[RMDB]
An RNA of 177 nucleotides, treated with DMS and 2A3 and read out base by base.
RNA sequence: GGGAACGACUCGAGUAGAGUCGAAAAGAGGAUGCUUGUCUCUGGGAUUAAGCCAUGCAAGUCUGGUGAAGCGAAAGUGGAACUGCGAACGGCUCAGUAGAACGGUGAUUAUUUAAUCGUGUAGGAAGUUAGUGGCGUAAUUCGUUACGCCACUAACAAAAGAAACAACAACAACAAC
Reactivity to DMS in 0.01 (KOAc 150mM, MgCl2 10mM, bicine 150mM(pH8.5), 24C), signal-to-noise 4, nucleotides 027 to 126: g010a070g000g000a080u010g000c070u000u000g010u020c020u010c030u000g000g030g000a060u020u010a080a150g000c010c050a050u010g010c070a040a040g010u000c070u020g010g030u000g010a210a120g010c040g000a050a070a100g030u000g000g010a080a050c050u000g020c070g010a060a080c130g000g000c040u000c030a050g000u000a070g000a030a100c060g010g020u010g020a080u020u010a100u020u020u030a110a040u010c040g000u010g000u000a090g010g010a080a110
Reactivity to 2A3 in 0.01 (KOAc 150mM, MgCl2 10mM, bicine 150mM(pH8.5), 24C), signal-to-noise 4, nucleotides 027 to 126: g110a010g010g020a060u090g020c050u050u080g030u040c000u000c010u050g080g000g000a030u130u100a040a040g010c040c000a020u090g020c020a100a040g040u000c020u010g020g030u050g020a090a020g050c000g030a070a100a020g020u050g030g030a040a030c040u040g020c040g020a060a020c010g020g010c020u020c020a040g030u020a030g020a050a000c040g000g030u030g040a040u000u110a030u100u110u080a120a050u080c080g000u030g040u080a070g070g060a130a060
Conditions: 150 mM KOAc, 10 mM MgCl2 and 150 mM bicine (pH 8.5), 24 C.
2A3 adducts were read by reverse transcription with SuperScript II with manganese.
Values are in units of 0.01, from 0 to 300, in steps of 10.